Conditions: 150 mM KOAc, 10 mM MgCl2 and 150 mM bicine (pH 8.5), 24 C.
This 177-nucleotide RNA was probed chemically with 2A3.
[RMDB]
RNA sequence: GGGAACGACUCGAGUAGAGUCGAAAAGUCACGGGUACGCACGGAGGCACCCGGCACCACCUCCUGCCCCACCUACGCAGACGUACACGUCAGGAAGAACCAUCGCGACGUGUGCAGGUGAUGAUGACAGGCACUGCUACUUCGGUAGCAGUGCCUGAAAAGAAACAACAACAACAAC
Reactivity to 2A3 in 0.01 (KOAc 150mM, MgCl2 10mM, bicine 150mM(pH8.5), 24C), signal-to-noise 1, nucleotides 027 to 126: g170u110c030a000c040g020g000g030u100a010c040g020c040a020c090g020g010a040g040g000c000a000c000c010c000g030g010c040a060c080c060a060c000c010u000c000c000u030g020c000c000c000c050a000c030c100u030a020c040g090c090a020g090a200c120g000u070a030c000a030c000g000u030c010a010g120g030a060a160g060a090a000c040c000a170u240c070g060c130g160a000c000g020u040g010u040g000c000a000g000g050u030g000a160u140g070a010u050g000a000